[RMDB]
RNA sequence: GGGAACGACUCGAGUAGAGUCGAAAAGCUCUGCGUAAGAAGUACGCAAACAUCAAGUGAUCCAAACCAAGGAGUAAUACAUGCCUCUGUUUACCGUUACCCCGGUGCGCCCGAAUCAGCAGAAUCAGUCGGGUGCGCUCGACGCACUGAACAUCACGGCUAAAACAAAUUUCGAUUUGUUUUAGCCAAAAGAAACAACAACAACAAC
Reactivity to 2A3 in 0.01 (KOAc 150mM, MgCl2 10mM, bicine 150mM(pH8.5), 24C), signal-to-noise 5, nucleotides 027 to 156: g020c010u030c040u040g000c000g010u010a080a090g090a180a070g190u030a020c010g000c020a020a080a050c030a100u120c090a120a020g050u030g040a030u030c030c030a050a020a060c020c010a110a060g030g020a030g020u080a040a070u080a100c080a070u080g030c000c020u050c020u040g080u040u040u040a110c100c010g020u040u060a070c000c000c020c000g010g010u010g000c000g010c000c010c000g010a030a040u140c060a030g110c010a020g110a060a080u170c030a010g120u010c020g010g020g000u000g000c000g010c010u060c030g030a030c030g010c000a040c030u060g020a040a020c010a020u030c010a020c080
Reactivity to DMS in 0.01 (KOAc 150mM, MgCl2 10mM, bicine 150mM(pH8.5), 24C), signal-to-noise 2, nucleotides 027 to 156: g000c020u010c020u000g010c030g060u010a070a120g010a190a160g000u000a030c040g010c010a040a050a090c040a140u010c060a080a100g040u000g000a130u000c030c020a040a130a110c040c040a110a130g020g000a100g030u000a040a060u000a050c100a110u000g030c030c000u000c020u000g000u010u000u000a030c050c060g000u010u000a090c010c000c010c030g000g000u000g020c010g000c020c030c000g050a030a070u010c070a140g070c070a150g000a180a130u000c030a080g000u000c000g010g060g000u000g030c000g020c010u020c040g000a050c040g050c040a070c030u000g020a040a070c030a080u010c070a140c140